RNA sequence: GGGAACGACUCGAGUAGAGUCGAAAAACUAGUCAAUAUCAUGAUUGCUAGCAGAGUACUACGUGAACGGUUAACCACGUCAGCGUGCGCGGCCUCUAUCGGCGACGAUAACAUAGUGCAUGGUGUCUAUGUGUUACGGAUUCGUCCGUAACACAUAAAAAGAAACAACAACAACAAC
Reactivity to DMS in 0.01 (KOAc 150mM, MgCl2 10mM, bicine 150mM(pH8.5), 24C), signal-to-noise 4, nucleotides 027 to 126: a090c030u010a020g000u030c050a040a050u000a110u010c170a110u010g000a070u010u000g000c010u000a030g020c070a090g000a140g010u000a090c040u000a030c070g010u000g000a130a090c080g020g020u000u010a100a190c200c030a040c050g010u000c070a070g010c050g020u000g000c030g010c050g000g010c090c030u000c110u000a060u000c050g020g000c180g010a120c040g000a040u000a040a070c100a050u000a100g010u000g020c010a050u000g000g030u000g000u000c090
Reactivity to 2A3 in 0.01 (KOAc 150mM, MgCl2 10mM, bicine 150mM(pH8.5), 24C), signal-to-noise 3, nucleotides 027 to 126: a000c030u050a010g100u150c050a060a020u060a020u170c100a130u160g190a050u090u050g000c000u040a010g000c050a000g030a030g100u060a090c060u010a000c060g070u010g100a100a010c050g080g090u140u130a060a000c010c000a080c040g030u030c080a040g060c000g030u030g010c020g010c020g030g030c020c010u020c010u040a040u060c020g040g020c030g020a030c020g000a060u060a080a010c010a060u090a030g050u050g020c020a030u030g060g090u030g080u020c020
An RNA of 177 nucleotides, treated with DMS and 2A3 and read out base by base. The data come from the RNA Mapping Database (RMDB), library OK2TRN. Reactivities are given for positions 27 through 126. For DMS, 3,759 sequencing reads were counted. The 2A3 profile rests on 2,783 reads. DMS adducts were read by reverse transcription with MarathonRT.